[RMDB]
RNA sequence: GGGAACGACUCGAGUAGAGUCGAAAACAAGCCCUGCAAGUUCUGUCCUACAGGAUGUCGCAACUUGCGGGUGGGGUUCACAGACUAGAUGACGGCAGGCUCGUGCGCAUUGCGUGCACGGGGCUCAAGAUAUAGUCGGUCCGCCCAAGGCAAGAUCGACCCAUAACGGCUUCGGCCGUUAUGGGUCAAAAGAAACAACAACAACAAC
Reactivity to 2A3 in 0.01 (KOAc 150mM, MgCl2 10mM, bicine 150mM(pH8.5), 24C), signal-to-noise 1, nucleotides 027 to 156: c040a000a060g020c030c000c030u040g030c000a010a000g000u020u000c010u060g030u070c070c110u080a090c070a150g040g000a070u100g160u220c130g000c030a020a020c000u040u000g000c040g000g000g040u080g000g020g000g000u120u130c070a070c010a140g010a000c030u020a020g010a200u240g050a140c030g030g010c150a020g140g000c000u000c000g000u020g010c040g030c020a090u180u300g070c100g080u000g000c000a000c010g010g010g010g010c000u000c040a000a030g040a020u080a010u000a060g000u000c000g000g000u000c010c010g140c010c000c000a050a160g110g000c060a030a060g000a130u180c050
An RNA of 207 nucleotides, treated with 2A3 and read out base by base. For 2A3, 599 sequencing reads were counted. The reactions ran in a buffer of 150 mM KOAc, 10 mM MgCl2 and 150 mM bicine (pH 8.5), at 24 C.